The data come from the RNA Mapping Database (RMDB), libraries RFM100 and RFMREP. Chemical mapping of a 177-nucleotide RNA with 2A3 and DMS. Values cover nucleotides 27 to 126. 2A3 adducts were read by reverse transcription with SuperScript II with manganese.
RNA sequence: GGGAACGACUCGAGUAGAGUCGAAAAGCCAAGUCACGUUGUUCUACCUUCGCUGGCGCUUGAUGGAGAAUGCGUGAAAAGCGUCGUCUCUCUGCCAUGUGCAUUUUCUCGUUAUGUUUUCAAACAGAUGUAAUCCCCAAUUCGUUGGGGAUUACAUAAAAGAAACAACAACAACAAC
Reactivity to 2A3 in 0.01 (KOAc 150mM, MgCl2 10mM, bicine 150mM(pH8.5), 24C), signal-to-noise 3, nucleotides 027 to 126: g030c020c010a060a000g070u030c000a030c060g080u080u130g050u130u090c010u060a290c000c010u050u000c010g040c060u060g090g000c010g000c030u030u110g020a060u130g030g010a060g000a050a020u030g000c000g020u020g040a020a060a000a020g020c010g020u050c010g060u020c020u000c020u000c010u100g030c010c040a120u170g020u030g040c030a040u100u020u000u000c010u000c020g030u070u070a060u090g020u020u060u030u050c060a120a080a040c060a090g120
Reactivity to DMS in 0.01 (KOAc 150mM, MgCl2 10mM, bicine 150mM(pH8.5), 24C), signal-to-noise 3, nucleotides 027 to 126: g010c030c050a110a130g000u020c040a050c080g020u010u010g020u000u000c020u000a110c080c010u010u000c080g010c080u010g000g010c100g000c030u000u000g000a070u010g010g000a090g000a090a030u000g020c020g020u010g000a020a040a090a150g000c030g010u000c040g000u000c020u000c000u000c050u000g000c030c050a060u030g020u030g020c050a060u000u010u000u000c020u000c040g030u000u000a070u000g010u000u000u000u000c060a080a110a090c220a090g010